[RMDB]
Annotation:
Source: RMDB library OK1LIB, as collected in RNAgym. Chemical mapping of a 177-nucleotide RNA with 2A3 and DMS. For DMS, 1,757 sequencing reads were counted. The RNA was probed in 150 mM KOAc, 10 mM MgCl2 and 150 mM bicine (pH 8.5) at 24 C.

RNA sequence: GGGAACGACUCGAGUAGAGUCGAAAAGAAGGUAAAAUCCUAGAAACGGGAGCGAAAGAACGUGGGAAUGAUGAAAAUCAGCUAGAAGAAUAGCUCCUGAGCGCAGAAAGAAUGCGAAACCACGUGAGGGAAUUCAUUUGUUCGCAAAUGAAUUCCCAAAAGAAACAACAACAACAAC
Reactivity to 2A3 in 0.01 (KOAc 150mM, MgCl2 10mM, bicine 150mM(pH8.5), 24C), signal-to-noise 2, nucleotides 027 to 126: g050a000a010g090g040u160a190a090a000a080u150c000c000u080a020g180a000a190a000c020g020g000g000a000g020c040g090a090a080a090g070a050a000c000g000u000g030g030g030a070a080u000g000a030u040g010a030a030a000a200u010c020a050g020c030u040a060g000a210a020g000a120a080u100a090g000c000u000c000c000u040g060a100g000c000g000c000a000g250a020a140a000g180a170a060u030g000c000g000a090a000a000c000c020a020c000g000u000g090a060
Reactivity to DMS in 0.01 (KOAc 150mM, MgCl2 10mM, bicine 150mM(pH8.5), 24C), signal-to-noise 2, nucleotides 027 to 126: g030a110a060g000g050u010a040a090a120a020u000c000c000u000a120g000a050a120a200c080g000g030g000a010g010c000g020a030a160a080g000a120a050c050g030u000g020g000g000a050a060u010g000a000u000g030a100a010a130a000u020c000a060g000c130u020a080g000a110a040g000a080a040u030a120g000c010u000c010c000u030g000a050g010c080g020c020a020g020a100a110a080g010a080a050u000g000c030g000a060a080a150c010c000a000c000g000u000g000a130